[RMDB]
RNA sequence: GGGAACGACUCGAGUAGAGUCGAAAAUGUACGUUCGCGUACAGAAAGCACCUUUGUGUGUGAGGACCUUUGAGCUGCAGAUCCCAUUGGGAUCGGGAGCAGCAAUGAUGAGGUCUCCCCACCACACACUCUGGUCGAGCACUACUUUCGAGUAGAAAUGGCAUAAUACGUUCGCGUAUUAUGCCAUAAAAGAAACAACAACAACAAC
Reactivity to 2A3 in 0.01 (KOAc 150mM, MgCl2 10mM, bicine 150mM(pH8.5), 24C), signal-to-noise 4, nucleotides 027 to 156: u040g000u010a000c010g010u040u080c300g000c020g090u020a000c010a020g080a040a110a010g100c120a010c000c010u010u030u020g000u010g000u000g000u010g000a030g010g010a010c000c000u010u000u040g060a030g000c020u000g000c000a030g010a020u010c030c000c110a260u180u300g000g000g000a010u020c010g010g030g050a080g000c000a000g000c000a010a090u130g020a030u040g000a010g010g010u000c010u020c010c000c000c000a030c000c020a000c000a000c000a000c000u000c020u010g000g030u050c050g030a010g070c090a020c020u070a010c000u080u100u150c140g080a010g020u060a030g120a080a210
Reactivity to DMS in 0.01 (KOAc 150mM, MgCl2 10mM, bicine 150mM(pH8.5), 24C), signal-to-noise 2, nucleotides 027 to 156: u000g060u030a010c000g030u010u000c300g000c030g020u000a020c000a060g030a080a130a160g030c010a070c030c010u000u020u000g040u020g020u000g020u020g000a250g010g000a030c000c000u030u000u000g000a130g000c000u000g050c030a080g000a000u000c020c000c040a300u000u020g060g040g040a010u000c000g000g030g000a200g040c020a030g030c000a020a040u010g030a090u000g000a030g000g010u000c020u000c230c010c020c000a300c160c000a000c030a020c030a030c010u000c050u010g000g010u000c030g000a240g010c080a180c000u020a040c030u000u000u000c090g010a050g030u010a090g000a120a100
Conditions: 150 mM KOAc, 10 mM MgCl2 and 150 mM bicine (pH 8.5), 24 C. The record gives the reactivity of an RNA of 207 nucleotides to 2A3 and DMS. In probing experiments dimethyl sulfate is read out at A N1 and C N3, which are open when not base-paired. 2A3 adducts were read by reverse transcription with SuperScript II with manganese.